[RMDB]
RNA sequence: GGGAACGACUCGAGUAGAGUCGAAAACAGCCACGUCGGGAUCUGAAUCGUCAUCGUAGUGGACUGGUCUCGAAGCCGGAGAGGGCGGCGACGGUAUAUUUUGCGGUGGGCGAGGGUCGCUGCUGAGGUCCACCUAUAGUGCGUCAGCAGGCAAGCGGAUACCCAACUUUUUCGAAAGUUGGGUAUCAAAAGAAACAACAACAACAAC
Reactivity to DMS in 0.01 (KOAc 150mM, MgCl2 10mM, bicine 150mM(pH8.5), 24C), signal-to-noise 1, nucleotides 027 to 156: c040a120g030c000c020a010c060g010u000c040g020g030g040a040u000c060u030g000a100a120u000c070g000u010c030a070u000c050g030u000a120g010u000g020g000a130c010u000g010g030u000c030u010c020g010a070a180g010c030c030g060g010a180g010a110g010g030g070c030g000g000c010g000a040c040g010g030u000a100u000a060u000u000u000u000g040c040g020g010u000g000g000g020c000g020a140g070g010g040u000c040g030c000u010g010c000u000g020a080g010g010u000c030c030a060c050c040u000a080u000a090g000u000g000c120g010u000c020a060g000c030a080g010g010c030a070a110g000c080g000
Reactivity to 2A3 in 0.01 (KOAc 150mM, MgCl2 10mM, bicine 150mM(pH8.5), 24C), signal-to-noise 3, nucleotides 027 to 156: c030a000g050c020c010a030c020g090u060c020g010g050g020a060u010c060u120g110a130a110u130c060g090u050c040a080u040c080g040u070a090g070u060g040g030a070c010u020g010g050u020c020u000c030g070a110a030g020c020c050g060g000a060g020a030g070g000g000c010g000g000c000g010a020c030g000g080u080a120u020a040u160u120u170u130g050c060g040g000u090g060g050g010c050g030a100g030g070g000u040c040g000c020u020g020c010u030g030a030g040g050u040c030c020a020c010c000u120a100u070a150g060u070g020c010g060u010c030a020g000c000a000g030g040c020a040a010g080c090g040